[RMDB]
RNA sequence: GGGAACGACUCGAGUAGAGUCGAAAAUCUUAAUUACAUCUGUAAUGACCCUCCUUCCAAAUAAGGUCACCUCCUGAGAUCCUGGGGUGAGGACUUCCACACCUCUUUUUGGGGGACACAGUUUAACUCAUAACACUGCUGCACAUGGCCAGGUCUACUGGAGUAAUCAUUUCGAUGAUUACUCCAGAAAAGAAACAACAACAACAAC
Reactivity to 2A3 in 0.01 (KOAc 150mM, MgCl2 10mM, bicine 150mM(pH8.5), 24C), signal-to-noise 2, nucleotides 027 to 156: u050c000u040u150a060a050u100u060a060c040a110u130c180u210g080u100a090a050u110g050a050c030c020c020u030c010c010u130u050c030c030a050a040a200u100a140a010g010g000u030c010a060c030c000u040c000c010u050g050a060g010a170u090c000c020u030g010g000g000g000u010g020a030g030g030a060c010u150u030c040c000a030c000a020c020c000u030c000u040u090u020u090u080g020g000g000g020g010a010c010a000c000a030g010u010u030u150a100a050c030u050c050a080u030a100a030c020a010c100u060g020c050u040g000c030a050c020a180u050g060g000c000c010a010g010g000u120c020u140a080
Reactivity to DMS in 0.01 (KOAc 150mM, MgCl2 10mM, bicine 150mM(pH8.5), 24C), signal-to-noise 1, nucleotides 027 to 156: u020c080u020u010a040a060u000u020a060c010a150u010c080u000g040u000a040a060u010g010a120c020c000c000u000c070c010u000u010c050c050a080a170a070u000a090a060g010g000u000c020a120c100c020u000c010c030u010g000a110g010a080u010c020c010u020g000g040g000g040u000g020a070g040g010a140c090u010u010c030c000a070c040a020c000c000u020c050u010u000u000u000u020g040g050g010g060g000a150c040a050c010a050g020u000u000u000a070a130c130u010c060a120u000a040a090c100a110c070u000g010c020u000g000c000a110c050a050u010g040g000c010c040a140g040g000u000c020u000a100